Source information
An RNA of 177 nucleotides, treated with 2A3 and read out base by base. Source: RMDB library OK1LIB, as collected in RNAgym. The reactions ran in a buffer of 150 mM KOAc, 10 mM MgCl2 and 150 mM bicine (pH 8.5), at 24 C.

[RMDB]
RNA sequence: GGGAACGACUCGAGUAGAGUCGAAAACUUCUGAAAAUUGCUUACUUGGUAUUCUUAAUUCACUUGAUAUUAUAUAUCCAAGCUCACAUGCCAAAGUAUAAUUUCUAAUUGAUGCUGACUUUUUGUCCGGACUCAUACCUUUCGAGGUAUGAGUCCGAAAAGAAACAACAACAACAAC
Reactivity to 2A3 in 0.01 (KOAc 150mM, MgCl2 10mM, bicine 150mM(pH8.5), 24C), signal-to-noise 2, nucleotides 027 to 126: c020u130u070c050u280g110a160a000a080a060u140u170g010c080u030u020a030c000u000u020g000g010u040a050u100u010c110u300u220a300a190u230u170c070a010c040u000u020g020a010u000a020u040u200a050u070a000u000a000u290c100c000a000a000g000c020u070c050a140c030a060u000g000c000c020a200a070a020g020u000a070u050a080a090u100u120u000c050u080a080a190u150u070g150a050u060g140c070u050g040a070c000u130u010u060u000u160g020u000c000